[RMDB]
Structure probing data (DMS and 2A3) for a 177-nucleotide construct.
The RNA was probed in 150 mM KOAc, 10 mM MgCl2 and 150 mM bicine (pH 8.5) at 24 C.
DMS adducts were read by reverse transcription with MarathonRT.
For 2A3 the reverse transcriptase was SuperScript II with manganese.
RNA sequence: GGGAACGACUCGAGUAGAGUCGAAAAUCGGAAGAGUCGACGCUGUGGGCUUUGCCGUCGAGCAACGUGACCCGGAUAUCGACCACCGGGUAGCCGGCGUGCACUCCCUUAUCCAUCUGUGCGCGGAUACGCGAUCUAUAUUCGUAUAGAUCGCGUAAAAAGAAACAACAACAACAAC
Reactivity to DMS in 0.01 (KOAc 150mM, MgCl2 10mM, bicine 150mM(pH8.5), 24C), signal-to-noise 9, nucleotides 027 to 126: u010c060g000g010a100a080g010a050g010u000c020g020a060c050g010c060u000g010u010g010g010g000c070u000u000u000g000c020c020g010u000c110g000a110g010c030a060a060c190g010u010g000a070c010c000c000g010g010a120u000a210u000c100g000a100c110c100a150c010c000g000g000g010u000a070g010c020c020g010g010c020g010u000g010c040a050c100u000c020c010c020u000u000a080u000c050c040a080u000c070u000g010u000g010c050g010c050g010g000a190
Reactivity to 2A3 in 0.01 (KOAc 150mM, MgCl2 10mM, bicine 150mM(pH8.5), 24C), signal-to-noise 8, nucleotides 027 to 126: u090c020g030g050a070a020g020a070g060u060c040g030a040c020g020c080u080g020u150g190g070g000c020u080u050u060g010c030c020g150u120c050g030a140g080c020a040a070c090g180u180g060a020c000c010c000g000g010a120u130a060u190c110g090a080c030c020a020c020c000g010g000g000u000a010g020c010c010g030g000c020g010u070g000c000a020c030u030c020c000c000u030u080a090u040c020c010a060u030c050u100g070u050g030c040g000c020g080g020a030